[RMDB]
Source information:
Chemical mapping of a 177-nucleotide RNA with 2A3 and DMS. DMS adducts were read by reverse transcription with MarathonRT. Reactivities are given for positions 27 through 126.

RNA sequence: GGGAACGACUCGAGUAGAGUCGAAAAGAUAUGGAUUGCUUCGAUAAGCUGCCAUCGGAAACGAUGGGCAGCUUUUGACGAAGCUGUCCUAAGUCAAAACCAUUAAGGGGUUCGCCCCUUAAUGGAAGCUCUUUCAUUAGUUCGCUAAUGAAAGAGCAAAAGAAACAACAACAACAAC
Reactivity to 2A3 in 0.01 (KOAc 150mM, MgCl2 10mM, bicine 150mM(pH8.5), 24C), signal-to-noise 2, nucleotides 027 to 126: g020a010u020a040u090g000g000a010u010u040g010c010u030u010c030g160a180u070a300a070g000c000u000g010c000c000a000u000c000g010g020a080a010a000c000g010a000u060g060g060g010c000a020g010c030u010u010u010u040g010a000c000g010a010a000g000c000u000g010u000c000c000u000a050a000g010u000c030a020a020a130a220c000c000a000u000u010a000a000g010g010g010g020u030u130c240g210c010c010c000c000u010u000a000a000u000g000g000a000a000
Reactivity to DMS in 0.01 (KOAc 150mM, MgCl2 10mM, bicine 150mM(pH8.5), 24C), signal-to-noise 3, nucleotides 027 to 126: g010a020u000a200u010g000g000a010u010u000g010c010u000u000c010g030a120u010a050a020g020c000u000g000c010c000a010u000c010g010g000a050a030a090c010g000a010u000g020g020g010c000a000g020c000u000u000u000u000g000a190c070g000a020a010g000c000u000g000u000c000c000u010a030a090g010u010c040a090a060a150a210c000c000a010u000u000a020a000g020g000g000g010u000u020c300g010c000c000c000c000u000u000a000a000u000g000g000a030a060